[RMDB]
RNA sequence: GGGAACGACUCGAGUAGAGUCGAAAAUGCAUGCCUGUCCGAUGCCGUCGUCGACCACGCGGGUCACUCCCACGACCAAGCGGGGGCGCUCGGGGGGCGAGGAUGCGCGCGCGGACACGGCCCUAAAGAAACCUAAGACGGGGUCGCCCACCGCACCCUCAUUCCAGAACUUCGGUUCUGGAAUGAGAAAAGAAACAACAACAACAAC
Reactivity to 2A3 in 0.01 (KOAc 150mM, MgCl2 10mM, bicine 150mM(pH8.5), 24C), signal-to-noise 1, nucleotides 027 to 156: u130g000c070a080u150g070c000c010u000g010u050c030c000g070a140u150g040c000c010g020u020c010g100u000c020g010a270c010c020a100c040g170c010g050g050g040u110c070a140c060u000c000c030c000a010c050g110a140c160c050a140a010g040c090g020g010g010g000g000c000g000c010u000c000g120g000g000g000g010g000c000g000a000g020g000a000u090g010c030g010c020g000c000g000c010g150g000a020c010a020c000g010g000c000c030c000u100a120a100a070g060a180a120a040c020c070u210a130a000g080a050c110g010g000g000g000u020c020g000c000c000c000a040c030c010g050c000a000c000c030